RNA sequence: GGGAACGACUCGAGUAGAGUCGAAAAGAUAUGGAAAUGGCUCUUGAGUAAACUAUUCGGAAACGAACGAAUUUACGUAAGUGAGGCCAUUUCCUAAGUCAAACAUCACGGCUUCGGCCGUGAUGAAGAUUUGUGCAAAGUUCGCUUUGCACAAAUCAAAAGAAACAACAACAACAAC
Reactivity to 2A3 in 0.01 (KOAc 150mM, MgCl2 10mM, bicine 150mM(pH8.5), 24C), signal-to-noise 2, nucleotides 027 to 126: g000a000u020a030u060g000g000a010a020a000u000g010g030c020u060c030u300u110g110a090g050u010a000a020a040c050u070a090u050u030c000g000g000a030a010a010c020g000a030a010c040g090a210a190u030u030u030a030c070g090u230a130a170g140u140g240a020g000g030c000c000a000u010u000u000c000c000u000a010a000g010u000c030a070a000a090c010a000u020c000a000c010g000g000c020u080u100c280g140g000c000c000g000u010g000a000u000g000a010a000
Reactivity to DMS in 0.01 (KOAc 150mM, MgCl2 10mM, bicine 150mM(pH8.5), 24C), signal-to-noise 2, nucleotides 027 to 126: g010a030u000a140u010g000g030a020a010a000u000g000g010c010u010c020u000u000g020a110g030u010a000a010a010c110u010a300u000u000c000g010g000a020a020a070c010g010a040a030c140g010a050a080u000u000u000a000c000g000u010a080a090g000u000g010a030g010g000c000c000a000u010u000u000c000c010u010a000a070g010u000c020a090a120a280c010a000u010c040a000c000g010g000c000u000u000c240g030g000c020c000g000u000g010a000u000g000a040a080